[RMDB]
RNA sequence: GGGAACGACUCGAGUAGAGUCGAAAAUGCUACUUGUGUGAGAAUACUUUUAGUACAAGCGAGUACACGCAGUAUACUGCUACUUGUGUGAGAAUACUUUUAGUACAAGCGAGUACACGCAGUAUAGGAACUGAAAUCCGUUCGCGGAUUUCAGUUCAAAAGAAACAACAACAACAAC
Reactivity to 2A3 in 0.01 (KOAc 150mM, MgCl2 10mM, bicine 150mM(pH8.5), 24C), signal-to-noise 3, nucleotides 027 to 126: u090g040c010u000a030c030u070u300g010u000g000u000g040a090g080a080a080u020a020c000u010u070u090u200a030g010u060a010c030a070a010g050c010g080a010g030u020a020c010a000c010g000c000a000g000u040a040u060a080c120u090g160c000u000a000c000u040u090g010u000g000u050g050a080g070a150a000u080a020c000u000u120u040u150a020g000u010a000c000a020a050g050c060g090a000g000u000a010c050a000c010g000c010a000g050u010a030u100a090g090
Reactivity to DMS in 0.01 (KOAc 150mM, MgCl2 10mM, bicine 150mM(pH8.5), 24C), signal-to-noise 1, nucleotides 027 to 126: u000g020c000u000a040c040u020u000g000u030g000u000g040a190g000a050a060u000a030c000u000u020u000u000a120g030u020a000c010a040a060g000c300g000a030g000u000a100c040a010c000g020c070a020g000u000a060u000a070c210u000g030c020u000a000c000u000u000g020u000g070u000g080a100g010a160a300u000a000c010u060u020u000u070a130g020u000a010c050a000a190g030c250g000a020g020u020a000c130a040c160g030c070a030g050u000a000u010a130g000